Chemical mapping of a 177-nucleotide RNA with DMS. For DMS, 763 sequencing reads were counted. DMS adducts were read by reverse transcription with MarathonRT.
RNA sequence: GGGAACGACUCGAGUAGAGUCGAAAAUGUCUGCACAACUGACAGACCGCAUGACCCCCAGAACUGAGAACGUCAGGAGGCAAAGAGAAAGGCUCAGGUCCCACAUGCGAGAACACUUCCGGGUCAAACCUGACAGAGUGUUCGCACUCUGUCAGGUAAAAGAAACAACAACAACAAC
Reactivity to DMS in 0.01 (KOAc 150mM, MgCl2 10mM, bicine 150mM(pH8.5), 24C), signal-to-noise 2, nucleotides 027 to 126: u000g030u020c030u000g020c060a090c120a070a230c150u000g010a080c030a030g010a110c020c050g000c050a050u000g000a300c020c040c010c040c060a100g000a060a100c150u000g010a100g030a040a110c070g020u030c040a060g000g000a040g000g010c040a090a030a160g000a080g000a080a140a160g000g010c000u000c010a080g060g030u000c020c010c000a110c070a030u010g000c030g000a110g000a010a080c040a030c130u000u000c030c060g020g000g000u010c130a060a040
The reactions ran in a buffer of 150 mM KOAc, 10 mM MgCl2 and 150 mM bicine (pH 8.5), at 24 C. Reactivities are rounded to 0.1 and cut off at 0 and 3. The data come from the RNA Mapping Database (RMDB), library OK2TST. Reactivities are given for positions 27 through 126.